[RMDB]
Background:
This 170-nucleotide RNA was probed chemically with 2A3 and DMS. The DMS profile rests on 14,048 reads. Reactivities are given for positions 27 through 129. The reactions ran in a buffer of 150 mM KOAc, 10 mM MgCl2 and 150 mM bicine (pH 8.5), at 24 C.

RNA sequence: GGGAACGACUCGAGUAGAGUCGAAAACCCCACAUAGCAGACCCCGGGUCCCCUUCCGAACGAGGGGGACGGUCCUUGGACCUCAGGGGGCCCAUGGAGCCGUGGGAAUCCCCAGACCUCCCUUCUCAGCCCGAUCUGUUCGCAGAUCGGAAAAGAAACAACAACAACAAC
Reactivity to 2A3 in 0.01 (KOAc 150mM, MgCl2 10mM, bicine 150mM(pH8.5), 24C), signal-to-noise 6, nucleotides 027 to 129: c010c000c030c000a050c020a050u160a020g050c050a000g010a120c010c000c020c010g030g010g000u020c000c010c000c000u020u000c020c040g150a110a080c050g000a030g000g010g000g000g010a010c010g000g000u010c000c010u080u210g060g020a010c000c010u060c090a080g010g000g000g010g010c000c000c000a000u030g030g050a040g070c050c020g020u080g000g000g010a030a130u150c010c010c000c010a010g010a020c000c000u000c000c000c000u080u010c010u010c030a040g020c000
Reactivity to DMS in 0.01 (KOAc 150mM, MgCl2 10mM, bicine 150mM(pH8.5), 24C), signal-to-noise 3, nucleotides 027 to 129: c110c000c010c080a000c120a070u050a070g070c060a030g030a140c060c020c010c080g000g000g000u000c030c000c000c020u020u020c020c110g000a030a170c120g030a040g050g020g010g020g000a030c000g030g030u040c020c040u050u100g000g000a050c010c050u000c070a100g070g010g050g000g060c000c050c030a060u020g020g030a120g060c080c020g030u000g030g010g030a120a120u070c000c000c000c000a000g080a120c080c020u030c010c000c010u040u020c000u000c050a140g050c160